[RMDB]
RNA sequence: GGGAACGACUCGAGUAGAGUCGAAAAGAUAUGGACGGCACCAAAGCGACGAUGUACGGUCGGAAACGACCGUACAUUAGCUUGGUGGCCGUCCUAAGUCAAACGCUCCAAGUUCGCUUGGAGCGAACAGUAUUACUAUCUUCGGAUAGUAAUACUGAAAAGAAACAACAACAACAAC
Reactivity to 2A3 in 0.01 (KOAc 150mM, MgCl2 10mM, bicine 150mM(pH8.5), 24C), signal-to-noise 4, nucleotides 027 to 126: g020a020u060a030u120g000g000a000c000g010g000c010a010c000c020a160a090a090g040c050g220a230c220g010a030u010g010u010a000c020g010g000u030c020g000g020a070a050a010c010g000a000c000c000g010u000a000c000a000u000u000a000g000c010u010u000g010g000u030g000g020c000c000g000u000c000c000u000a000a000g000u000c010a020a020a080c020g000c000u000c010c000a010a010g010u060u190c300g040c170u000u010g000g000a010g000c000g000a000a000
Reactivity to DMS in 0.01 (KOAc 150mM, MgCl2 10mM, bicine 150mM(pH8.5), 24C), signal-to-noise 8, nucleotides 027 to 126: g010a050u000a300u000g000g010a020c010g010g000c000a030c010c000a030a040a090g040c020g020a140c300g010a010u000g010u000a000c000g000g010u000c000g010g000a070a090a200c000g010a010c000c000g020u000a000c000a000u000u010a160g010c020u000u010g000g010u000g020g020c000c010g000u000c000c000u000a010a100g010u000c040a120a110a300c030g010c000u000c000c000a020a020g010u000u010c270g020c010u000u000g010g000a010g020c000g000a010a050

Chemical mapping of a 177-nucleotide RNA with 2A3 and DMS.